[RMDB]
RNA sequence: GGGAACGACUCGAGUAGAGUCGAAAAUUGACGGUGGGGUCGUCUUUACUCCAAUGAGCAUCGAACCACAGCGAAGUGGAUUCAUCGCAAAGAUGCAUUAGUCACGGAGCCACGUAGACAUGGCUAAACCACCGCUACUAUUCGUAGUAGCGGUGGUAAAAGAAACAACAACAACAAC
Reactivity to DMS in 0.01 (KOAc 150mM, MgCl2 10mM, bicine 150mM(pH8.5), 24C), signal-to-noise 2, nucleotides 027 to 126: u000u000g000a030c020g020g020u000g000g000g030g020u000c070g010u000c030u010u010u010a130c080u030c010c140a100a110u020g010a110g000c030a020u000c010g010a120a110c080c030a030c070a060g010c110g000a050a060g010u010g000g010a140u000u010c070a040u000c050g000c110a100a080a180g010a000u000g030c000a210u010u040a060g000u000c020a010c080g000g000a120g000c030c020a030c030g020u010a080g000a100c060a080u000g010g010c000u000a000a050
Reactivity to 2A3 in 0.01 (KOAc 150mM, MgCl2 10mM, bicine 150mM(pH8.5), 24C), signal-to-noise 1, nucleotides 027 to 126: u070u100g010a020c020g030g060u070g040g050g040g020u030c000g020u020c000u000u140u060a060c010u040c010c000a000a170u190g040a050g030c020a000u000c010g010a040a040c000c010a040c040a080g180c080g170a300a010g030u050g040g030a090u050u030c030a070u020c080g030c100a000a060a130g030a000u030g000c020a020u040u100a030g030u070c040a010c060g040g000a040g000c000c000a010c040g020u010a050g020a090c020a040u020g000g030c000u060a160a010